[RMDB]
Conditions: 150 mM KOAc, 10 mM MgCl2 and 150 mM bicine (pH 8.5), 24 C. This 207-nucleotide RNA was probed chemically with 2A3. For 2A3, 448 sequencing reads were counted. Values cover nucleotides 27 to 156. The data come from the RNA Mapping Database (RMDB), library ARCHII.
RNA sequence: GGGAACGACUCGAGUAGAGUCGAAAAAGGGGUAGGUCGAGCUUAAGCGGCGAGCCGAGGGGGACGUCCUCGUAAAAACGUCACCUAAAGAUAACUGGCAAACAAAACUACGCUUUAGCUGCCUAAUUGCUGCAGCUAGCUCCUCCCGCCAUCGCCCGAGUUCACCAUAGUUCGCUAUGGUGAACUCAAAAGAAACAACAACAACAAC
Reactivity to 2A3 in 0.01 (KOAc 150mM, MgCl2 10mM, bicine 150mM(pH8.5), 24C), signal-to-noise 1, nucleotides 027 to 156: a000g110g000g000g070u090a030g060g120u090c090g010a000g030c020u060u000a030a000g040c010g000g000c030g000a020g000c070c020g000a010g000g000g000g060g010a010c030g000u040c000c030u050c030g040u140a010a000a010a010a010c000g000u000c030a050c000c040u040a060a140a140g090a170u080a140a080c090u060g000g010c040a110a080a070c030a050a140a170a090c080u060a010c100g030c020u040u070u050a000g000c000u030g000c010c000u050a230a130u070u140g000c060u000g000c030a000g000c000u010a000g000c000u010c000c000u010c030c000c000g070c020c000a070u030c170g030c010c000c000